[RMDB]
RNA sequence: GGGAACGACUCGAGUAGAGUCGAAAACAGGAGGUUAGCAUAGCUCCAUUCUACUAUGCAGCUAGUCGUCGUUUUCGACGUCUAGGAUAGACCCCUACAGCAGGGUCCAUGAACUGCUGAUUACCGCUUCUCGUAGCGCGGGUUCUGGCUACGUACAGCGUAUUAAUCAGUUCGCUGAUUAAUACGCAAAAGAAACAACAACAACAAC
Reactivity to DMS in 0.01 (KOAc 150mM, MgCl2 10mM, bicine 150mM(pH8.5), 24C), signal-to-noise 2, nucleotides 027 to 156: c030a110g010g000a060g010g010u010u010a160g050c000a010u000a010g000c010u000c080c300a160u010u000c040u000a000c010u000a000u010g000c030a300g010c020u000a030g030u010c010g000u020c020g050u000u000u000u010c020g010a020c010g000u000c000u000a010g010g010a120u010a070g000a060c020c000c010c020u010a190c040a080g000c030a020g010g020g000u000c050c070a110u010g020a080a110c010u010g010c010u000g000a160u020u010a070c030c030g030c050u000u000c050u000c030g000u000a030g030c010g050c050g050g030g030u000u000c110u010g030g030c040u010a020c060g000u010a070c090a150
The record gives the reactivity of an RNA of 207 nucleotides to DMS.
The RNA was probed in 150 mM KOAc, 10 mM MgCl2 and 150 mM bicine (pH 8.5) at 24 C.
For DMS the reverse transcriptase was MarathonRT.
The data come from the RNA Mapping Database (RMDB), library OK3TST.